[RMDB]
RNA sequence: GGGAACGACUCGAGUAGAGUCGAAAAGGCUGGCCGACCGGUCCGGCAGUCUGGCAGCACCGCUGCUGACGCACUUGGCCAUCAACGAGGCCGGUGCGGUCGCCGCGGUGCUGGUCCAGCGGCGUUCGUCACGCACGUAAUUCGUUACGUGCGUGACAAAAGAAACAACAACAACAAC
Reactivity to DMS in 0.01 (KOAc 150mM, MgCl2 10mM, bicine 150mM(pH8.5), 24C), signal-to-noise 2, nucleotides 027 to 126: g000g000c020u000g000g040c030c020g020a140c230c050g000g000u000c020c010g000g040c020a040g000u000c000u000g020g010c020a010g000c010a030c020c020g010c000u000g000c010u000g020a050c010g000c000a010c000u000u010g120g020c000c000a120u020c190a080a180c300g010a140g010g010c000c000g000g020u010g000c000g010g000u000c160g030c000c150g000c010g000g010u000g020c000u000g000g010u000c010c010a110g010c040g020g010c030g020u020u000c130
Reactivity to 2A3 in 0.01 (KOAc 150mM, MgCl2 10mM, bicine 150mM(pH8.5), 24C), signal-to-noise 2, nucleotides 027 to 126: g040g000c010u040g020g070c010c040g110a260c100c050g070g030u080c000c030g020g080c010a000g050u040c000u010g000g020c000a000g030c000a010c040c000g000c000u000g000c080u160g030a000c000g020c000a020c110u300u300g020g110c070c000a060u240c080a010a170c120g110a130g010g020c000c000g000g000u000g010c020g000g060u050c000g000c020c010g000c000g000g000u000g000c010u010g000g000u000c000c000a000g020c040g010g010c010g030u120u190c030